[RMDB]
RNA sequence: GGGAACGACUCGAGUAGAGUCGAAAAAACAGAAAACAUUGAACUAUGCCAAGUGGUGUACUGCAAUCCCUUCACGGCGAAGUAGUCUUGAAAAAAGCUAUCUAAAAAGUUGGUCAGGGAAUCGUGAACGUGGGAGGCCAGGGCCCUAGUGGGCUCCCACGUGCGCUAGAUUCGUCUAGCGCACGUGAAAAGAAACAACAACAACAAC
Reactivity to DMS in 0.01 (KOAc 150mM, MgCl2 10mM, bicine 150mM(pH8.5), 24C), signal-to-noise 2, nucleotides 027 to 156: a170a090c050a090g030a060a050a050a100c040a080u000u000g000a110a100c030u000a070u020g030c020c040a150a200g020u000g030g030u020g030u000a060c060u010g020c010a080a090u000c030c000c010u000u010c040a060c030g000g010c080g000a090a100g000u000a040g040u000c010u010u010g010a000a040a090a050a060a020g020c030u010a050u000c060u000a080a110a060a040a130g020u010u010g000g020u000c030a080g000g020g000a080a050u010c040g000u010g000a020a060c080g030u010g000g010g020a100g010g010c020c030a020g030g030g020c000c020c010u010a090g040u000g030g040g000c000u000c010c070
Reactivity to 2A3 in 0.01 (KOAc 150mM, MgCl2 10mM, bicine 150mM(pH8.5), 24C), signal-to-noise 2, nucleotides 027 to 156: a020a000c080a030g130a050a140a010a010c050a010u110u100g040a020a020c030u050a060u140g070c040c040a080a100g000u030g030g010u090g000u050a060c010u030g050c010a030a100u040c010c010c000u000u030c040a020c060g090g000c040g020a060a010g020u020a010g070u040c000u010u080g150a170a000a000a000a000a000g040c010u010a020u090c020u190a120a030a020a060a060g050u070u100g030g040u080c060a030g000g020g080a040a040u100c040g020u040g050a010a040c050g010u080g010g000g010a010g070g010c050c040a000g000g000g000c000c000c000u080a100g080u210g030g030g010c010u080c000c010
Overview
Source: RMDB library OK3TST, as collected in RNAgym. An RNA of 207 nucleotides, treated with DMS and 2A3 and read out base by base. For DMS the reverse transcriptase was MarathonRT. The DMS profile rests on 4,718 reads. The RNA was probed in 150 mM KOAc, 10 mM MgCl2 and 150 mM bicine (pH 8.5) at 24 C. The 2A3 profile rests on 894 reads.